[RMDB]
RNA sequence: GGGAACGACUCGAGUAGAGUCGAAAAGACGGCGAAGCGGCGCUACGCGGCGCUCUCGGGCGCGACGUUCGACGGGCGCGUGCGCGUCUUCGCCGAUGUCGACGAUCGCGCCGCGCAGCUCGACGUGUCGCCGAAGACGGCCGGCGUCGGCAAGGCCGAUAGCUCAGCACUUCGGUGCUGAGCUAUCAAAAGAAACAACAACAACAAC
Reactivity to 2A3 in 0.01 (KOAc 150mM, MgCl2 10mM, bicine 150mM(pH8.5), 24C), signal-to-noise 1, nucleotides 027 to 156: g080a020c030g000g010c020g010a040a010g000c000g030g020c050g000c040u140a060c000g020c000g090g000c040g060c010u000c000u010c000g010g070g070c160g030c070g080a090c070g020u040u040c020g000a010c070g000g070g000c000g040c020g010u220g060c230g000c020g080u000c000u120u020c020g000c020c000g000a020u020g030u000c040g000a020c010g080a190u000c010g010c010g000c040c000g040c010g030c010a060g010c030u060c070g020a050c030g050u040g080u120c010g000c010c030g020a040a020g060a020c040g020g000c000c000g000g040c040g050u160c020g000g160c040a030a210g060g030c030c000
Structure probing data (2A3) for a 207-nucleotide construct. Values are in units of 0.01, from 0 to 300, in steps of 10. Values cover nucleotides 27 to 156. The reactions ran in a buffer of 150 mM KOAc, 10 mM MgCl2 and 150 mM bicine (pH 8.5), at 24 C.